Chemical mapping of a 177-nucleotide RNA with DMS and 2A3.
For DMS the reverse transcriptase was MarathonRT.
Reactivities are given for positions 27 through 126.
The RNA was probed in 150 mM KOAc, 10 mM MgCl2 and 150 mM bicine (pH 8.5) at 24 C.
RNA sequence: GGGAACGACUCGAGUAGAGUCGAAAAGAAAGAGGCUAAACCGUGUGAACUAUGAUGGCCUUACAAAGCUCGACGAAAAGAAACACUUGAUACUACCGCAAGCCAGAGCUGCUGCAUACGGAAGAAAACCUCAUAGCGGGUUCGCCCGCUAUGAGGUAAAAGAAACAACAACAACAAC
Reactivity to DMS in 0.01 (KOAc 150mM, MgCl2 10mM, bicine 150mM(pH8.5), 24C), signal-to-noise 1, nucleotides 027 to 126: g000a100a020a070g010a020g000g000c080u000a080a140a080c060c030g000u000g000u000g000a150a090c070u040a140u010g010a190u060g000g000c060c090u000u000a190c110a130a050a120g000c050u000c000g000a030c120g000a080a040a030a070g020a130a140a100c050a190c180u000u000g000a100u020a020c190u000a080c100c030g000c000a070a000g050c000c000a010g030a200g000c000u000g000c000u060g020c010a100u000a010c030g000g000a050a030g000a120a010a150
Reactivity to 2A3 in 0.01 (KOAc 150mM, MgCl2 10mM, bicine 150mM(pH8.5), 24C), signal-to-noise 2, nucleotides 027 to 126: g120a020a030a050g080a020g020g000c020u030a000a180a070c020c010g000u020g060u020g150a150a010c020u050a120u200g000a100u020g050g000c000c000u000u040a070c020a010a110a040g060c000u050c080g050a080c020g070a210a000a000a000g110a020a130a020c050a020c040u030u070g050a040u050a280c040u010a010c030c030g010c040a000a040g050c040c000a000g000a000g120c030u030g000c020u050g010c000a000u040a050c000g050g050a030a000g000a000a100a000